RNA sequence: GGGAACGACUCGAGUAGAGUCGAAAAACUUUUUGAUUCGUCAAAAAGUAACUACCGAGAAAGCGACUCGGUAUACGCAAAUAACCCUUGGAAACAAGGGAACAAACUAACGUUUCGACGUUAGUAAUUCACAUAUGGCAUUCGUGCCAUAUGUGAAAAAAGAAACAACAACAACAAC
Reactivity to 2A3 in 0.01 (KOAc 150mM, MgCl2 10mM, bicine 150mM(pH8.5), 24C), signal-to-noise 2, nucleotides 027 to 126: a000c030u060u000u000u000u010g010a030u020u050c050g040u020c020a010a000a010a000a010g000u000a010a050c060u010a000c010c000g000a000g050a040a200a030g260c120g170a070c000u000c000g010g030u000a030u020a000c050g060c080a090a100a050u190a110a110c030c000c000u000u030g010g010a000a070a030c000a010a010g000g000g000a000a010c010a010a120a000c000u000a000a000c000g010u000u020u180c240g060a010c000g000u000u010a000g000u010a020a120
Reactivity to DMS in 0.01 (KOAc 150mM, MgCl2 10mM, bicine 150mM(pH8.5), 24C), signal-to-noise 2, nucleotides 027 to 126: a060c000u000u000u000u000u000g000a000u000u000c160g030u010c000a010a000a000a000a030g010u000a050a100c120u000a010c000c000g000a010g010a090a150a070g020c210g030a050c000u000c000g000g000u000a010u000a040c190g020c160a040a090a050u000a150a140c000c000c000u000u000g000g020a150a200a210c010a000a000g000g020g020a070a020c210a120a120a020c000u030a020a010c000g010u000u000u010c150g000a040c000g010u000u000a000g000u000a000a120
Structure probing data (2A3 and DMS) for a 177-nucleotide construct. For DMS, 1,157 sequencing reads were counted. The reactions ran in a buffer of 150 mM KOAc, 10 mM MgCl2 and 150 mM bicine (pH 8.5), at 24 C. 2A3 adducts were read by reverse transcription with SuperScript II with manganese. Source: RMDB library M2PK50, as collected in RNAgym.